RNA sequence: GGGAACGACUCGAGUAGAGUCGAAAAGGCGGCCGUGAGACCAUUGUCCGGCAAUGCGGGUUAUGCAGUGGGGGUUUGACCACAUAAUCGUGGAAGGCACGGGCGUCGGACAGGCUGUCUCGCAUUACGGCGAAUGGACGUUCGCGUUCGUUCGCCGAAAAGAAACAACAACAACAAC
Reactivity to DMS in 0.01 (KOAc 150mM, MgCl2 10mM, bicine 150mM(pH8.5), 24C), signal-to-noise 5, nucleotides 027 to 126: g020g000c020g000g030c050c070g030u010g010a070g010a060c030c040a270u050u010g000u000c010c010g040g000c030a080a100u030g010c070g000g000g030u020u020a050u020g000c070a100g010u010g000g010g000g010g020u000u000u050g020a220c000c000a050c020a050u000a060a090u000c140g000u020g000g000a200a110g000g000c020a070c040g000g010g000c180g010u000c010g000g000a030c030a020g000g020c060u020g000u000c000u000c020g000c060a100u030u030a140
Reactivity to 2A3 in 0.01 (KOAc 150mM, MgCl2 10mM, bicine 150mM(pH8.5), 24C), signal-to-noise 9, nucleotides 027 to 126: g050g010c030g010g020c020c020g070u090g050a060g020a040c010c040a080u030u080g010u020c010c000g010g000c000a010a020u160g020c040g000g030g010u070u080a090u130g050c050a070g050u120g010g020g010g020g040u040u120u220g070a040c010c010a010c010a040u190a100a070u120c080g020u020g030g060a130a070g100g000c040a020c070g020g010g010c030g000u010c010g000g000a000c000a000g030g020c020u050g010u010c000u000c010g030c020a060u080u200a080
Source: RMDB library OK1LIB, as collected in RNAgym. An RNA of 177 nucleotides, treated with DMS and 2A3 and read out base by base. 2A3 adducts were read by reverse transcription with SuperScript II with manganese. For 2A3, 23,639 sequencing reads were counted. The reactions ran in a buffer of 150 mM KOAc, 10 mM MgCl2 and 150 mM bicine (pH 8.5), at 24 C. DMS adducts were read by reverse transcription with MarathonRT.